[RMDB]
An RNA of 177 nucleotides, treated with DMS and 2A3 and read out base by base. For 2A3, 1,894 sequencing reads were counted. As a SHAPE reagent, 2A3 marks flexible, mostly unpaired nucleotides at the ribose 2'-OH. Source: RMDB library RFMREP, as collected in RNAgym.
RNA sequence: GGGAACGACUCGAGUAGAGUCGAAAAAUGCUGUACAGUGAAGCCCGGAUUCUGUGUGUGCUGCGUUUGCUGAUUUGCCAUACACAUAAAUAUACGUAGCACCACAUGAUUCGGCUUCGUGGUGCUACCAGGAUUAGCUGUUCGCAGCUAAUCCUGGAAAAGAAACAACAACAACAAC
Reactivity to DMS in 0.01 (KOAc 150mM, MgCl2 10mM, bicine 150mM(pH8.5), 24C), signal-to-noise 2, nucleotides 027 to 126: a050u010g010c040u020g030u010a080c040a140g020u020g000a040a020g010c120c060c010g020g000a030u000u000c120u010g020u010g000u010g020u010g030c000u010g010c000g000u000u000u000g010c200u020g000a150u000u000u000g000c070c140a060u010a120c120a090c110a080u000a060a080a090u030a080u020a000c040g000u000a010g010c000a010c000c000a000c010a020u000g000a060u000u000c000g000g000c020u000u000c020g030u010g010g000u020g020c020u000a130
Reactivity to 2A3 in 0.01 (KOAc 150mM, MgCl2 10mM, bicine 150mM(pH8.5), 24C), signal-to-noise 2, nucleotides 027 to 126: a000u070g030c030u030g000u030a000c000a050g040u020g060a000a010g030c070c110c020g000g000a020u060u010c000u010g010u010g060u020g010u010g050c000u000g010c010g020u020u080u110g060c060u060g080a300u100u080u240g080c080c020a080u120a160c090a010c010a040u210a080a120a010u250a010u000a050c000g000u010a000g010c000a000c010c000a010c000a000u020g000a000u000u010c020g010g000c000u000u010c000g020u010g040g010u030g030c000u040a080